RNA sequence: GGGAACGACUCGAGUAGAGUCGAAAAAUUACCAGCAAUUUUCACCGGGUAUGCUGCACGGUGAUGAUGUGGUUCUCCAACUUCAACAUUGGUUGCAUGAUCACUAUCACCAAUCACACAGCAUCAGUCGGAGUCCUCCCUUCGGGGAGGACUCCGAAAAAGAAACAACAACAACAAC
Reactivity to 2A3 in 0.01 (KOAc 150mM, MgCl2 10mM, bicine 150mM(pH8.5), 24C), signal-to-noise 1, nucleotides 027 to 126: a010u110u070a070c000c060a060g200c000a200a130u000u140u100u240c030a100c000c000g040g030g040u040a080u000g110c080u000g000c000a000c110g000g000u000g000a000u000g150a170u010g000u000g000g070u000u140c000u000c140c000a000a000c000u240u300c000a000a190c000a060u050u300g000g000u030u020g000c040a000u280g030a000u000c000a000c060u070a000u040c000a000c000c080a000a070u300c030a110c000a000c000a170g190c030a000u000c000a110g090

Structure probing data (2A3) for a 177-nucleotide construct. It was measured as part of the RMDB library OK1LIB. Values are in units of 0.01, from 0 to 300, in steps of 10.